[RMDB]
RNA sequence: GGGAACGACUCGAGUAGAGUCGAAAACUCAAUAUUUUGACGAAUGAUAUUAUUAAGUUUUUUACUACCUAAACUUCCUCCCAUGACUAAUAACACUUUUUUAUUUUUAUCAAAAUCAGUGAGUUGAUCCAAUCCCUCAAUUCGUUGAGGGAUUGGAAAAAGAAACAACAACAACAAC
Reactivity to 2A3 in 0.01 (KOAc 150mM, MgCl2 10mM, bicine 150mM(pH8.5), 24C), signal-to-noise 2, nucleotides 027 to 126: c000u000c040a040a020u090a070u140u130u060u080g020a040c040g010a110a120u120g120a030u040a000u230u080a040u000u090a200a000g100u000u000u010u000u020u100a070c010u030a020c020c060u000a010a080a200c070u100u040c000c000u000c060c000c000a070u010g070a040c040u120a180a100u060a150a000c020a020c100u010u180u000u000u000u040a120u000u110u030u020u030a100u080c000a000a010a010a010u010c000a010g040u000g020a030g010u040u020g000a010